[RMDB]
Source: RMDB library OK3TST, as collected in RNAgym. An RNA of 207 nucleotides, treated with DMS and 2A3 and read out base by base.
RNA sequence: GGGAACGACUCGAGUAGAGUCGAAAAUAUCUUCUUUACGUAGUAAUCGUUGUAGGGAGAGAACUCGGACAUCCUAUAGAACAACGAUUUGAUCAUAGGUAGAGAUACUUUCAGUCUGUGUCUGAUGAUGUCGUGAAUGACAUCCGACUUGUAUAAGGAUCGUACGGAAUUUCGAUUCCGUACGAUCAAAAGAAACAACAACAACAAC
Reactivity to DMS in 0.01 (KOAc 150mM, MgCl2 10mM, bicine 150mM(pH8.5), 24C), signal-to-noise 1, nucleotides 027 to 156: u020a020u010c020u000u000c020u000u000u000a070c060g010u010a090g000u030a050a020u000c050g020u000u000g060u010a130g070g020g010a210g000a170g030a030a040c130u010c050g050g020a090c030a130u020c020c020u020a160u000a120g020a090a050c020a010a070c010g020a090u000u000u010g020a160u010c100a080u010a050g010g020u000a090g010a070g000a050u000a030c010u020u010u000c060a220g010u000c040u000g030u010g010u000c020u000g020a160u000g000a060u010g010u000c020g000u020g010a160a140u000g000a030c010a020u010c030c050g000a070c070u020u000g010u010a110u000a110a210g030
Reactivity to 2A3 in 0.01 (KOAc 150mM, MgCl2 10mM, bicine 150mM(pH8.5), 24C), signal-to-noise 3, nucleotides 027 to 156: u110a010u000c030u070u020c000u020u040u100a040c050g040u030a030g090u060a100a010u000c000g000u000u040g020u000a060g000g050g000a040g010a030g020a100a060c080u030c150g090g030a020c020a100u000c000c000u110a090u080a210g060a100a000c010a000a000c010g060a030u020u030u130g140a110u090c060a150u090a100g080g000u030a030g020a010g000a030u030a110c050u060u110u060c070a080g020u000c070u110g110u030g020u010c050u020g080a120u080g000a000u000g050u040c010g040u050g250a130a120u110g000a010c020a010u000c000c000g010a020c010u010u070g050u170a050u040a110a010g100